Record summary
The record gives the reactivity of an RNA of 207 nucleotides to 2A3. Reactivities are given for positions 27 through 156. For 2A3 the reverse transcriptase was SuperScript II with manganese. The RNA was probed in 150 mM KOAc, 10 mM MgCl2 and 150 mM bicine (pH 8.5) at 24 C. For 2A3, 348 sequencing reads were counted.
[RMDB]
RNA sequence: GGGAACGACUCGAGUAGAGUCGAAAAGUUUUACAUUCAGAAGUACAUGGACAGGUUUGUCACAUGGAUACACUGAGUAAUGGUGAGGAUUGGGCUUGUGGUGUACCCCUUAUCCAAAUAAUAAACAUUGUAUCCAAUAGGUAAAUUUCUAACCCUAGACCAUUACCGGGUUCGCCCGGUAAUGGUCAAAAGAAACAACAACAACAAC
Reactivity to 2A3 in 0.01 (KOAc 150mM, MgCl2 10mM, bicine 150mM(pH8.5), 24C), signal-to-noise 1, nucleotides 027 to 156: g040u050u030u030u150a120c060a100u160u000c060a000g040a020a000g050u010a080c030a030u070g040g040a020c060a060g200g140u180u190u190g020u000c030a040c020a100u030g010g000a000u000a040c050a000c060u000g030a010g000u090a030a050u110g000g020u040g020a020g000g020a100u130u300g060g000g000c070u220u090g100u090g080g000u020g020u260a240c050c000c010c000u040u030a020u000c030c070a160a000a000u260a060a050u070a000a010a000c010a040u060u070g090u050a010u000c020c020a040a030u000a000g000g010u000a000a000a230u040u050u010c060u070a110a090c010c010c060u030a010